[RMDB]
RNA sequence: GGGAACGACUCGAGUAGAGUCGAAAAUUUUUAACCAAUCUUCAAAAGGAUGGUAUUACUGUUAACUGAAUGCUUGGUAUGUGUUAUGCAUGCAUUAUCUUGUUAACUAUUCACAACUCCAUGAAGGUAGAUAUUGUCACCGUGUUUAUAGGUGAGAACAUGCCUAGGUUUUCGAACCUAGGCAUGUAAAAGAAACAACAACAACAAC
Reactivity to 2A3 in 0.01 (KOAc 150mM, MgCl2 10mM, bicine 150mM(pH8.5), 24C), signal-to-noise 3, nucleotides 027 to 156: u050u040u000u030u100a020a020c000c000a040a010u030c010u040u010c030a080a060a080a020g010g000a060u040g070g110u180a110u180u080a080c120u110g000u000u000a010a000c000u000g010a000a000u000g020c010u070u040g090g130u160a070u140g250u030g220u300u240a060u130g040c010a020u010g000c010a010u000u040a040u260c080u080u030g000u030u000a000a000c000u000a050u070u110c030a000c030a220a110c100u020c000c000a000u040g000a010a000g040g040u040a020g060a050u200a120u180u100g110u000c000a000c020c010g050u050g050u120u210u080a150u170a050g020g000u000g020a000g000a000
Reactivity to DMS in 0.01 (KOAc 150mM, MgCl2 10mM, bicine 150mM(pH8.5), 24C), signal-to-noise 1, nucleotides 027 to 156: u000u000u000u010u020a020a300c050c000a230a100u000c020u010u000c000a040a060a110a220g000g000a040u000g010g010u000a120u000u000a100c110u010g020u000u000a010a030c010u000g020a100a050u000g030c100u000u000g070g050u010a000u010g020u000g020u000u000a050u000g000c060a050u010g000c000a080u010u000a100u000c070u000u030g010u000u010a000a010c000u000a120u000u000c080a050c010a080a060c010u000c010c010a210u000g010a050a030g030g000u000a060g000a160u000a070u000u000g010u000c010a000c010c020g010u020g030u000u000u020a140u000a120g000g050u040g000a110g000a130
Overview: The record gives the reactivity of an RNA of 207 nucleotides to 2A3 and DMS. DMS (dimethyl sulfate) methylates the pairing face of unpaired adenines and cytosines. The reactions ran in a buffer of 150 mM KOAc, 10 mM MgCl2 and 150 mM bicine (pH 8.5), at 24 C. The 2A3 profile rests on 846 reads. 2A3 is a SHAPE reagent: it acylates the 2'-hydroxyl of flexible nucleotides of all four kinds.